RNA sequence: GGGAACGACUCGAGUAGAGUCGAAAAGAAUUGCUCAUCCUCAAUUACUUCGAUCUCCCCACAGUGCCCGGAAUAGUGUCUUGAUCAUAGAAGUGGCUCAAUUUAUGAUUGCUAAAUAGCCAAUUUCAUUUGUAAUUUCCGAGACAGCUCCAGGAGAGCUAGCAGGUAAUUUCGAUUACCUGCUAGCAAAAGAAACAACAACAACAAC
Reactivity to 2A3 in 0.01 (KOAc 150mM, MgCl2 10mM, bicine 150mM(pH8.5), 24C), signal-to-noise 2, nucleotides 027 to 156: g000a000a060u060u010g020c030u050c080a110u120c050c020u030c010a010a140u110u080a140c030u030u090c050g050a160u040c010u010c080c010c010c030a030c020a020g080u060g050c020c000c000g030g000a020a050u070a100g120u060g040u030c000u020u010g070a050u070c020a070u040a130g010a010a010g040u040g000g010c000u020c050a040a040u040u040u090a120u150g080a100u000u100g040c010u040a010a040a070u080a100g000c000c000a050a060u060u110u040c010a020u030u000u070g030u040a140a100u020u050u020c040c010g000a000g030a000c020a020g090c010u030c080c020a040g100g020a020g060a040
Reactivity to DMS in 0.01 (KOAc 150mM, MgCl2 10mM, bicine 150mM(pH8.5), 24C), signal-to-noise 1, nucleotides 027 to 156: g010a060a090u010u000g010c090u000c030a110u020c000c080u000c000a060a120u010u010a070c020u020u000c060g050a120u000c110u000c000c010c030c060a090c080a070g010u020g010c020c000c000g040g010a040a110u010a070g030u010g000u000c050u010u020g000a140u010c120a080u000a060g000a040a060g020u010g010g030c020u000c040a040a080u010u020u000a030u000g000a060u010u010g000c160u020a000a070a090u000a070g000c000c000a030a120u000u010u010c030a170u000u010u000g000u000a050a220u000u000u000c070c000g010a080g010a070c030a090g000c040u010c040c030a080g050g010a110g010a180